Chemical mapping of a 207-nucleotide RNA with 2A3.
It was measured as part of the RMDB library OK3TST.
The reactions ran in a buffer of 150 mM KOAc, 10 mM MgCl2 and 150 mM bicine (pH 8.5), at 24 C.
[RMDB]
RNA sequence: GGGAACGACUCGAGUAGAGUCGAAAAUGUCUACCCCGUCGCUGCUGCUGCGGGUGUUGUUCUGCGCGGUGUGCGGGGAGCCCGCGUACAAGUUCACCGGGGGCGGCAGGAAGAACGCUCGCUACCGCUGCCGGUCGUGGGGCUGGGCGCAGCGGUGCCACAAUGUGUUAUUCGUAACACAUUGUGGAAAAGAAACAACAACAACAAC
Reactivity to 2A3 in 0.01 (KOAc 150mM, MgCl2 10mM, bicine 150mM(pH8.5), 24C), signal-to-noise 3, nucleotides 027 to 156: u140g010u010c060u080a180c020c000c020c000g070u060c030g000c020u020g000c010u050g000c020u050g070c030g060g030g020u040g040u060u070g030u060u030c050u070g010c010g020c010g040g060u130g010u090g090c200g020g020g000g000a000g010c000c000c000g000c000g010u040a060c040a190a100g050u050u110c030a020c040c020g000g020g000g020g000c000g010g000c020a050g040g020a060a060g020a070a020c050g020c110u080c030g080c080u070a040c000c010g010c000u020g060c040c020g010g020u030c030g080u170g050g090g000g000c010u050g030g080g000c090g000c000a000g020c000g000g000u010g020